RNA sequence: GGGAACGACUCGAGUAGAGUCGAAAAGUUAUGGAAAACGUCUUAGCUACCACUACAACAACAAUGCUGGACGGUGAUGGUUCGACUAACUCGAAACCAUCACGUAGUGGUAGUCGUUCCCAUUCAAAGUUAGGAAUCGAUUCGUCGAUUCCUAACUAAAAGAAACAACAACAACAAC
Reactivity to 2A3 in 0.01 (KOAc 150mM, MgCl2 10mM, bicine 150mM(pH8.5), 24C), signal-to-noise 5, nucleotides 027 to 126: g040u070u060a080u300g130g020a060a120a000a040c010g030u030c050u120u180a040g010c010u000a010c010c010a010c010u020a000c010a090a000c020a050a010c030a060a290u190g050c060u100g100g030a050c050g010g010u000g000a010u010g000g030u010u000c000g030a020c070u190a180a040c040u030c040g030a080a040a070c010c000a000u010c000a000c010g000u000a010g000u000g010g000u000a000g000u000c010g010u000u000c010c000c000a000u100u120c040a020a080
Reactivity to DMS in 0.01 (KOAc 150mM, MgCl2 10mM, bicine 150mM(pH8.5), 24C), signal-to-noise 4, nucleotides 027 to 126: g020u010u000a100u010g020g010a080a070a040a060c040g000u000c020u010u000a120g010c000u000a000c010c010a010c000u010a030c010a060a090c150a080a070c180a100a110u010g010c110u000g010g000a030c060g030g010u000g010a020u000g010g020u000u000c010g000a030c180u000a080a130c200u020c010g000a040a020a030c000c000a000u000c000a000c010g000u000a010g030u000g000g010u000a020g010u010c040g020u010u010c000c000c010a120u000u010c120a050a140